[RMDB]
RNA sequence: GGGAACGACUCGAGUAGAGUCGAAAAUUGAGGUUUAUGCGUUGCUAAGGCUGGACUACUCUUCUUCUUCGGGAGCCUGAGCGUAAGCCUCGAGCUUGCAAGGCCCGAAGAUCGGCAAGUUAGCUAAGCCUUGCGGCACAUUCGUGUGCUGCGGGGUAAAAGAAACAACAACAACAAC
Reactivity to DMS in 0.01 (KOAc 150mM, MgCl2 10mM, bicine 150mM(pH8.5), 24C), signal-to-noise 5, nucleotides 027 to 126: u020u030g000a040g000g020u000u010u010a020u010g000c060g020u020u020g020c080u000a140a040g010g010c010u000g000g000a060c150u020a230c110u010c050u010u010c060u000u000c000u000u010c010g000g010g000a060g010c000c010u010g000a080g020c090g010u010a020a010g000c000c010u030c160g000a050g010c020u000u000g010c050a150a070g000g000c000c000c000g000a030a010g000a030u020c070g010g000c060a030a040g000u010u010a070g000c040u000a070a210
Reactivity to 2A3 in 0.01 (KOAc 150mM, MgCl2 10mM, bicine 150mM(pH8.5), 24C), signal-to-noise 3, nucleotides 027 to 126: u050u070g010a010g010g030u020u020u020a030u060g010c020g020u050u110g050c080u070a040a010g030g000c000u010g010g040a040c020u060a100c040u090c010u120u010c010u030u000c000u000u000c010g020g000g000a020g060c000c000u010g020a030g000c030g020u060a000a000g000c000c000u000c050g000a030g000c000u000u000g000c010a030a030g020g000c000c000c000g000a000a000g000a010u020c000g000g000c020a010a030g020u040u040a020g020c010u030a040a010